[RMDB]
RNA sequence: GGGAACGACUCGAGUAGAGUCGAAAAUUUUGUAAGCAUGGGGUAAUGAGGUGUGAUCUGAUUUGAUCCUGCAAUGAGUUGAUGCCAGGAGGCAUGAUCUGACCAGAUCCUGCCAGGGUGUGACCCAGGAGCUCAUCUGAUUAGAUCCUUGAUCCUGAUGUUAAUGGUUGUUCGCAACCAUUAACAUAAAAGAAACAACAACAACAAC
Reactivity to DMS in 0.01 (KOAc 150mM, MgCl2 10mM, bicine 150mM(pH8.5), 24C), signal-to-noise 2, nucleotides 027 to 156: u010u000u010u010g020u000a080a150g050c060a150u010g000g020g020g020u010a070a110u000g000a110g040g010u000g000u010g020a040u020c040u000g000a110u000u000u010g000a030u010c020c010u000g000c060a140a110u010g010a080g000u010u000g010a110u010g000c060c010a100g020g010a150g020g000c020a030u000g000a020u000c000u000g000a150c130c120a100g000a030u000c010c040u000g010c000c010a100g020g000g030u000g030u000g020a090c020c030c010a080g010g000a170g000c050u000c040a000u000c030u010g010a130u000u000a040g010a040u000c020c100u000u000g030a150u000c010c010u010g010
Reactivity to 2A3 in 0.01 (KOAc 150mM, MgCl2 10mM, bicine 150mM(pH8.5), 24C), signal-to-noise 4, nucleotides 027 to 156: u090u090u060u150g090u070a090a040g020c050a060u150g010g010g010g030u170a180a110u160g030a060g090g020u070g020u110g050a040u000c030u030g040a040u040u020u090g030a040u020c010c000u030g030c070a070a140u130g020a070g060u020u080g080a050u090g050c000c040a080g050g070a070g020g080c020a000u040g000a000u000c010u010g080a100c070c060a010g000a010u000c010c020u020g030c000c000a030g050g000g020u120g070u110g080a050c000c000c020a020g030g000a020g020c020u030c040a000u000c030u000g000a010u010u040a040g050a130u050c000c050u010u020g010a040u040c000c030u040g030
The record gives the reactivity of an RNA of 207 nucleotides to DMS and 2A3. For 2A3 the reverse transcriptase was SuperScript II with manganese. For 2A3, 2,379 sequencing reads were counted. The RNA was probed in 150 mM KOAc, 10 mM MgCl2 and 150 mM bicine (pH 8.5) at 24 C.